This 177-nucleotide RNA was probed chemically with DMS and 2A3. 2A3 adducts were read by reverse transcription with SuperScript II with manganese. Source: RMDB library OK1LIB, as collected in RNAgym. The 2A3 profile rests on 59,189 reads. DMS adducts were read by reverse transcription with MarathonRT. The DMS profile rests on 34,583 reads. Conditions: 150 mM KOAc, 10 mM MgCl2 and 150 mM bicine (pH 8.5), 24 C.
RNA sequence: GGGAACGACUCGAGUAGAGUCGAAAAGGGUUUAGCAGCGGUUACGACGACGUACCCUUUAUUUUUUAAGUCGUCGAAGAGGUACGAGUUGCUGAUUUUUUUCAGCUUUUAUUGCUGCUUUACCCAAGGGUGGUUGUGUCUUCGGGUGCGACCACCCAAAAGAAACAACAACAACAAC
Reactivity to DMS in 0.01 (KOAc 150mM, MgCl2 10mM, bicine 150mM(pH8.5), 24C), signal-to-noise 8, nucleotides 027 to 126: g000g010g000u000u000u000a010g000c010a010g020c010g010g000u010u010a100c280g000a020c010g000a090c040g010u000a020c020c010c010u000u010u010a000u000u020u010u030u040u050a090a130g010u010c150g010u010c110g000a030a020g000a170g000g010u000a020c010g010a300g000u010u000g010c010u000g000a000u000u000u030u030u050u010u000c000a010g010c020u030u020u040u000a020u010u010g000c000u010g000c010u000u000u000a020c000c000c000a070a080
Reactivity to 2A3 in 0.01 (KOAc 150mM, MgCl2 10mM, bicine 150mM(pH8.5), 24C), signal-to-noise 9, nucleotides 027 to 126: g000g000g000u000u000u010a000g000c000a000g000c010g040g030u060u090a060c090g030a010c010g060a060c000g060u010a020c000c000c000u000u030u010a060u020u050u020u000u010u110a100a060g060u060c050g050u070c110g050a010a010g060a110g010g010u020a010c010g000a030g040u060u060g030c010u000g030a060u060u080u090u050u010u060u020c000a000g000c020u040u090u060u110a060u040u070g000c000u000g000c000u000u000u010a000c000c000c000a010a020